Chemical mapping of a 177-nucleotide RNA with 2A3 and DMS. The reactions ran in a buffer of 150 mM KOAc, 10 mM MgCl2 and 150 mM bicine (pH 8.5), at 24 C. The 2A3 profile rests on 2,140 reads.
RNA sequence: GGGAACGACUCGAGUAGAGUCGAAAAUAACUCGGAACUGUACGUCUCCAGCAGCUCUACAAUGUGCGGAUGCUUUAACAUGUGACAUAUUGUGGCCUCGCGCUUCAGAUCUGCAAAAAGAAAAAUACCGCUGAUUAUCAUUCGUGAUAAUCAGCGGAAAAGAAACAACAACAACAAC
Reactivity to 2A3 in 0.01 (KOAc 150mM, MgCl2 10mM, bicine 150mM(pH8.5), 24C), signal-to-noise 4, nucleotides 027 to 126: u150a040a000c010u000c020g020g010a100a050c100u100g030u130a020c070g040u030c010u000c020c010a000g000c010a010g010c000u010c000u040a040c020a030a030u070g010u030g010c020g030g090a020u040g020c050u150u120u200a070a040c020a010u180g030u010g300a060c000a000u070a000u000u110g020u020g060g000c000c010u020c050g010c030g000c000u030u020c010a020g020a150u000c000u020g020c000a050a100a010a060a030g240a050a140a040a040a000u140a050
Reactivity to DMS in 0.01 (KOAc 150mM, MgCl2 10mM, bicine 150mM(pH8.5), 24C), signal-to-noise 1, nucleotides 027 to 126: u050a090a060c060u100c010g000g000a030a050c030u000g060u040a070c150g050u000c000u000c050c010a300g000c000a000g000c000u000c020u000a110c180a070a010u000g060u000g000c040g020g000a140u000g010c040u040u010u040a110a060c010a000u000g000u000g000a170c030a040u000a020u010u000g020u040g000g030c220c000u000c060g020c000g000c020u010u000c180a020g000a110u030c000u000g000c000a030a010a030a060a000g050a020a020a050a020a070u020a140